Annotation
Structure probing data (2A3 and DMS) for a 177-nucleotide construct. It was measured as part of the RMDB library OK1LIB. Conditions: 150 mM KOAc, 10 mM MgCl2 and 150 mM bicine (pH 8.5), 24 C.

[RMDB]
RNA sequence: GGGAACGACUCGAGUAGAGUCGAAAACUAUGUACAGACAGUACAGUGGAUAAGGUCUGUCGAUAUCCAACUAGAACAAUGGUACUUGCAGUGGUAUCUAUCAAGAUAGGCAGGCUAUCAUAGAAAGAAGAUGUGUAAUAUUCGUAUUACGCAUCUUAAAAGAAACAACAACAACAAC
Reactivity to 2A3 in 0.01 (KOAc 150mM, MgCl2 10mM, bicine 150mM(pH8.5), 24C), signal-to-noise 9, nucleotides 027 to 126: c010u020a040u070g000u010a010c010a110g200a040c030a040g070u020a000c000a020g070u080g150g030a090u060a210a090g050g010u000c000u000g000u010c010g080a050u000a010u060c020c010a020a040c040u070a030g020a060a020c050a070a080u110g020g000u030a010c000u040u120g080c090a060g040u050g100g010u020a010u000c000u010a090u090c050a060a000g000a020u010a010g010g000c010a000g000g000c010u020a020u040c010a020u030a050g100a020a090a010g110
Reactivity to DMS in 0.01 (KOAc 150mM, MgCl2 10mM, bicine 150mM(pH8.5), 24C), signal-to-noise 9, nucleotides 027 to 126: c030u010a060u020g010u010a010c010a120g010a120c200a120g010u010a010c020a090g020u010g010g010a070u010a050a090g010g010u000c020u000g010u000c010g010a130u020a020u010c030c050a070a130c170u020a020g010a080a100c210a060a060u020g000g010u010a030c040u000u020g020c140a090g000u020g010g020u000a010u000c010u000a090u030c160a090a100g000a050u010a030g000g010c010a020g000g000c070u000a030u010c040a060u010a080g000a080a100a080g010